[RMDB]
RNA sequence: GGGAACGACUCGAGUAGAGUCGAAAAGAUAUGGACGACCUCAGCUCUAGACAGUAUGGUCCAUCGGAAACGAUGGAGCCAUACCGAAGCUGGGUCGUCCUAAGUCAAAUCGCCCUUCGGGGCGAAAGGUCAAUGUCAAGUUCGCUUGACAUUGACCAAAAGAAACAACAACAACAAC
Reactivity to 2A3 in 0.01 (KOAc 150mM, MgCl2 10mM, bicine 150mM(pH8.5), 24C), signal-to-noise 2, nucleotides 027 to 126: g010a000u020a010u040g020g000a010c000g000a010c010c090u300c150a000g030c010u020c040u080a160g150a300c140a080g010u020a010u010g000g020u010c000c000a000u000c000g000g020a000a050a030c040g000a000u020g040g010a060g100c020c010a030u020a010c030c040g120a040a000g000c000u030g000g070g000u000c000g000u010c000c000u000a000a000g000u000c000a010a000a130u040c000g010c010c010c000u010u020c300g100g000g010g020c000g020a090a020a000
Reactivity to DMS in 0.01 (KOAc 150mM, MgCl2 10mM, bicine 150mM(pH8.5), 24C), signal-to-noise 2, nucleotides 027 to 126: g010a060u000a300u020g020g000a040c000g000a060c010c000u030c020a000g020c000u000c250u030a080g010a140c300a210g020u000a000u000g000g000u010c000c000a000u000c020g020g000a100a090a170c010g040a020u000g000g000a060g040c020c000a000u030a000c000c070g040a080a020g010c000u010g010g000g000u000c000g010u010c000c000u000a000a070g010u020c020a060a110a260u020c000g000c010c010c010u010u030c300g040g000g060g020c000g010a010a000a020

Structure probing data (2A3 and DMS) for a 177-nucleotide construct. Conditions: 150 mM KOAc, 10 mM MgCl2 and 150 mM bicine (pH 8.5), 24 C. The 2A3 profile rests on 3,041 reads. Reactivities are given for positions 27 through 126.